RNA sequence: GGGAACGACUCGAGUAGAGUCGAAAACUUAUGCUUCGGCAUAAGAAAAAAUCCUAAGUCCCUAUGGAGGCUGCAUAUGAGGGAGUCGGAAACGACGAAGAACUCAUAUGGCCGCGAAACAUAGGGAUAUGGAAAAAAACGUCACUUCGGUGACGAAGUGCGUUAAUGGGUUCGCCCAUUAACGCACAAAAGAAACAACAACAACAAC
Reactivity to 2A3 in 0.01 (KOAc 150mM, MgCl2 10mM, bicine 150mM(pH8.5), 24C), signal-to-noise 2, nucleotides 027 to 156: c000u000u000a000u000g010c010u010u110c290g150g000c030a020u020a000a010g050a050a100a010a000a000a010u040c030c000u040a120a020g020u000c000c000c010u000a000u010g070g030a100g150g030c030u090g040c000a020u030a000u010g000a000g020g000g010a010g030u020c010g000g040a110a090a070c000g010a000c020g030a120a000g000a020a010c020u000c000a010u020a010u030g150g000c010c010g000c010g080a110a110a020c000a000u000a000g000g000g000a000u010a030u010g000g060a020a000a020a020a080a000a080c030g030u020c000a000c000u070u080c220g110g040u010g000a000c000g010a050a040